This 177-nucleotide RNA was probed chemically with 2A3 and DMS. It was measured as part of the RMDB library OK2TST. For DMS the reverse transcriptase was MarathonRT.

[RMDB]
RNA sequence: GGGAACGACUCGAGUAGAGUCGAAAAGGUUCAUGCCCAACUGUUCGGCGAUGAGUCUGAGUACCGGUUGGAGGACUUCCCGUACGUCAAUGGUCUGGGCGAGGAGCUGGCUCACCUCGAAAAGGAGAGAGAUAUAGACGUUCGCGUCUAUAUCUCUAAAAGAAACAACAACAACAAC
Reactivity to 2A3 in 0.01 (KOAc 150mM, MgCl2 10mM, bicine 150mM(pH8.5), 24C), signal-to-noise 2, nucleotides 027 to 126: g060g010u020u020c030a040u130g000c030c000c010a030a000c040u040g040u080u070c060g000g000c020g060a060u140g040a070g060u020c030u130g080a020g040u090a130c030c070g070g080u080u130g090g020a070g030g050a010c000u040u010c000c000c020g000u060a080c060g030u040c030a010a040u040g040g000u010c050u070g040g020g020c030g000a050g040g010a010g020c010u030g030g000c020u020c020a060c030c010u000c000g070a030a000a070a060g130g010a060g000
Reactivity to DMS in 0.01 (KOAc 150mM, MgCl2 10mM, bicine 150mM(pH8.5), 24C), signal-to-noise 2, nucleotides 027 to 126: g000g020u010u000c000a080u000g010c070c000c000a070a030c050u000g020u000u000c070g030g000c030g020a140u020g000a100g000u020c020u010g010a210g000u000a100c150c040g020g010u000u020g020g010a190g000g000a070c060u010u000c030c030c020g010u010a080c060g000u020c090a040a070u000g000g000u000c130u000g010g000g000c040g000a100g000g000a050g020c000u000g010g000c060u000c040a130c070c000u000c010g000a030a080a090a090g010g010a150g010